[RMDB]
RNA sequence: GGGAACGACUCGAGUAGAGUCGAAAAGCACGCGCCGCAGCUCCGGCUCGGAUGCCCGCAUGAGAUCCGUGCCGUUGAACAGGAUUUCCCCCGAAGGGUGGCUUGCCGCCGGAUAGGGCAGGAGCUACUGGAUCACGUAUUUCGAUACGUGAUCCAGAAAAGAAACAACAACAACAAC
Reactivity to DMS in 0.01 (KOAc 150mM, MgCl2 10mM, bicine 150mM(pH8.5), 24C), signal-to-noise 2, nucleotides 027 to 126: g010c040a040c070g030c120g010c030c060g020c150a170g010c060u000c050c020g000g000c010u000c010g010g000a080u000g010c000c070c050g000c240a100u020g000a080g020a050u000c000c020g030u000g020c020c050g020u010u000g010a100a100c100a120g020g000a160u000u000u010c010c020c010c040c090g020a140a140g010g020g010u000g000g020c020u000u000g020c030c080g010c010c030g000g000a090u030a140g010g000g000c060a050g010g000a130g010c040u020a120